[RMDB]
RNA sequence: GGGAACGACUCGAGUAGAGUCGAAAAGAUCGUACUGGCCUACGCUGCAGGUACGGAUCGGCCAGUACAGCGCGAUGAUGCGCGGCCGUACUCUGAUCAUACGAUCGCGUACUGUGGCGCGUGGCGCCACGCGAGGCGGUUUCGACCGCCUCGCGUGAAAAGAAACAACAACAACAAC
Reactivity to 2A3 in 0.01 (KOAc 150mM, MgCl2 10mM, bicine 150mM(pH8.5), 24C), signal-to-noise 4, nucleotides 027 to 126: g040a070u170c070g010u060a040c030u050g030g000c000c000u040a040c100g000c040u100g040c040a130g070g200u140a050c010g000g010a050u080c060g000g000c010c000a000g010u010a020c010a030g000c020g000c010g160a200u270g060a070u170g060c010g000c000g040g050c030c010g000u010a000c020u050c120u200g040a050u080c020a120u120a290c150g000a020u010c010g000c010g070u010a010c010u040g030u070g180g000c000g000c070g030u020g040g000c030g000c010
Reactivity to DMS in 0.01 (KOAc 150mM, MgCl2 10mM, bicine 150mM(pH8.5), 24C), signal-to-noise 4, nucleotides 027 to 126: g010a080u010c100g010u000a040c050u000g010g020c010c010u000a110c120g010c050u000g020c050a100g010g020u010a100c050g010g000a060u010c160g010g000c050c050a040g000u000a020c020a070g000c000g020c000g000a110u010g010a110u010g000c010g010c010g000g020c040c050g000u000a010c050u010c070u020g010a070u020c110a170u010a090c110g010a020u000c010g000c280g020u000a030c020u010g020u000g000g010c000g010c000g020u010g000g020c040g030c070